[RMDB]
RNA sequence: GGGAACGACUCGAGUAGAGUCGAAAAUGAUACCAGCUAACACUCUCCUUCUUGGAGAGCUGAUGAAGUUUUUGAUGCUAUGUAUAAAAGGAAAUGAAUAUGAUGUUCAGAAAAUGCUUAGUGCACACCCUCGAUAGCAAUUCGUUGCUAUCGAGGGAAAAGAAACAACAACAACAAC
Reactivity to 2A3 in 0.01 (KOAc 150mM, MgCl2 10mM, bicine 150mM(pH8.5), 24C), signal-to-noise 1, nucleotides 027 to 126: u090g060a040u030a060c000c000a000g080c060u100a110a030c000a020c000u000c000u040c000c000u110u300c040u140u100g000g000a000g000a000g000c040u000g010a050u170g060a080a100g090u090u050u100u140u130g100a120u110g000c020u000a010u050g000u040a050u100a130a200a050a000g070g070a120a000a040u050g010a050a000u170a240u300g200a090u270g040u000u070c000a000g140a060a080a070a000u030g000c020u040u070a000g030u120g140c100a090c000a050
Reactivity to DMS in 0.01 (KOAc 150mM, MgCl2 10mM, bicine 150mM(pH8.5), 24C), signal-to-noise 1, nucleotides 027 to 126: u030g030a150u030a180c010c030a180g020c120u000a060a180c100a080c020u000c000u000c010c000u020u010c190u000u000g000g000a010g000a010g010c180u000g030a210u060g000a050a100g000u000u000u000u000u000g010a250u000g000c020u000a040u000g010u000a020u000a050a070a120a030g080g000a050a030a070u000g000a020a020u000a050u000g020a120u040g000u010u000c000a030g000a030a060a050a120u010g000c000u000u010a040g010u010g000c110a070c200a150